[RMDB]
Annotation:
Chemical mapping of a 177-nucleotide RNA with 2A3 and DMS. It was measured as part of the RMDB library OK2TST. For 2A3 the reverse transcriptase was SuperScript II with manganese.
RNA sequence: GGGAACGACUCGAGUAGAGUCGAAAAUGAAGUUGACGACUGGCGCUUUGGCGCGGGCCUUCUCGGCGACUUGCUUACGCAUUAACUCCAGGGCGCGGGAGUUCGGUGCCGCGGCGAUCGCGUCGAGUAUGACCAAAUCAUUCGUGAUUUGGUCAUAAAAAGAAACAACAACAACAAC
Reactivity to 2A3 in 0.01 (KOAc 150mM, MgCl2 10mM, bicine 150mM(pH8.5), 24C), signal-to-noise 2, nucleotides 027 to 126: u130g050a060a010g070u090u090g060a040c040g040a060c040u070g070g010c030g020c050u060u070u230g070g070c030g000c000g060g000g000c000c010u050u000c000u010c040g040g000c000g020a020c030u030u050g010c000u040u050a020c040g010c010a070u160u020a050a010c010u010c020c000a010g010g070g030c040g000c020g020g030g010a000g000u060u060c080g030g000u050g160c000c020g000c010g000g010c010g010a020u010c050g000c010g060u040c000g000a000g010
Reactivity to DMS in 0.01 (KOAc 150mM, MgCl2 10mM, bicine 150mM(pH8.5), 24C), signal-to-noise 4, nucleotides 027 to 126: u000g010a080a140g010u010u010g010a120c070g010a090c070u010g000g010c050g010c040u000u000u000g030g010c030g040c020g010g000g020c010c030u000u000c010u000c020g010g010c000g000a050c100u000u000g010c030u010u000a300c300g020c100a050u000u000a050a050c030u000c120c000a080g000g000g010c060g020c020g000g010g000a040g000u000u000c140g020g010u000g010c000c010g000c080g000g010c020g000a020u000c160g010c010g010u000c020g000a090g010
For DMS, 4,746 sequencing reads were counted.